[RMDB]
About this RNA
Structure probing data (DMS and 2A3) for a 177-nucleotide construct. The DMS profile rests on 8,679 reads. For DMS the reverse transcriptase was MarathonRT.
RNA sequence: GGGAACGACUCGAGUAGAGUCGAAAACGAGUGAGAGCCUCGGCAAGGCUAGUCGAGUACACUUGUACAGAACGUGAGUGUAACGCCUCACUGUACGCUGUAUCAAGGCACAGUAACAAGUGGGAAAAUAUACCGCUAGUUUCGACUAGCGGUAUAUAAAAGAAACAACAACAACAAC
Reactivity to DMS in 0.01 (KOAc 150mM, MgCl2 10mM, bicine 150mM(pH8.5), 24C), signal-to-noise 7, nucleotides 027 to 126: c050g010a070g010u000g010a110g010a150g020c130c010u010c030g020g010c090a110a120g030g020c070u000a060g010u000c030g010a080g000u010a080c040a100c020u000u000g010u000a040c060a050g000a110a090c080g000u000g000a020g020u000g000u010a090a100c300g000c200c010u000c010a010c010u010g020u000a060c240g010c030u000g000u010a040u010c090a060a070g000g000c100a060c050a060g000u000a090a060c060a050a050g000u000g010g010g000a100a070a090
Reactivity to 2A3 in 0.01 (KOAc 150mM, MgCl2 10mM, bicine 150mM(pH8.5), 24C), signal-to-noise 4, nucleotides 027 to 126: c020g020a020g030u090g020a170g010a030g070c020c000u010c010g040g000c040a060a060g140g060c040u080a030g040u020c010g010a010g020u040a030c050a010c030u020u010g000u030a020c010a020g050a100a010c040g010u010g020a010g010u030g010u030a050a010c040g050c000c010u000c000a000c000u020g000u030a060c120g000c040u010g030u040a050u180c050a040a000g030g000c030a020c020a050g020u060a060a020c020a060a030g040u040g020g080g000a010a160a000

High DMS reactivity at an A or C suggests that its Watson-Crick edge is free. Reactivities are given for positions 27 through 126. 2A3 adducts were read by reverse transcription with SuperScript II with manganese.